[RMDB]
RNA sequence: GGGAACGACUCGAGUAGAGUCGAAAAGAUAUGGACGAAUCCAUGAACUACAUCUGUACUUCGGAAACGAAGUACUGAUGCAUGGACAUGUGUCCUAAGUCAAAAGAAAUUGCUUCGGCAAUUUCAAUCUGUCUUAUCACUUCGGUGAUAAGACAGAAAAAGAAACAACAACAACAAC
Reactivity to 2A3 in 0.01 (KOAc 150mM, MgCl2 10mM, bicine 150mM(pH8.5), 24C), signal-to-noise 2, nucleotides 027 to 126: g000a000u020a020u050g010g010a000c070g090a110a230u000c010c000a000u010g010a050a060c150u230a050c270a010u050c010u020g010u000a000c000u000u010c000g020g010a000a020a020c000g010a000a000g000u010a000c010u020g000a010u010g000c020a000u010g000g000a030c090a150u300g250u150g010u050c000c000u000a050a000g030u000c000a040a000a070a250g010a000a000a000u010u000g010c010u040u100c300g190g070c000a000a020u000u030u040c000a010a070
Reactivity to DMS in 0.01 (KOAc 150mM, MgCl2 10mM, bicine 150mM(pH8.5), 24C), signal-to-noise 2, nucleotides 027 to 126: g000a010u000a240u020g000g010a010c000g010a160a150u000c040c010a000u000g010a070a050c080u020a300c010a000u010c010u010g010u000a000c000u000u000c000g000g000a070a040a120c010g000a010a000g000u000a000c000u000g000a000u000g000c010a000u000g020g000a090c300a050u020g000u000g010u000c000c000u000a040a130g000u020c010a100a060a090a110g000a010a000a000u000u000g010c000u000u000c220g010g000c000a000a000u000u000u000c000a080a080
Annotation
Chemical mapping of a 177-nucleotide RNA with 2A3 and DMS. 2A3 adducts were read by reverse transcription with SuperScript II with manganese. The RNA was probed in 150 mM KOAc, 10 mM MgCl2 and 150 mM bicine (pH 8.5) at 24 C. The DMS profile rests on 1,495 reads.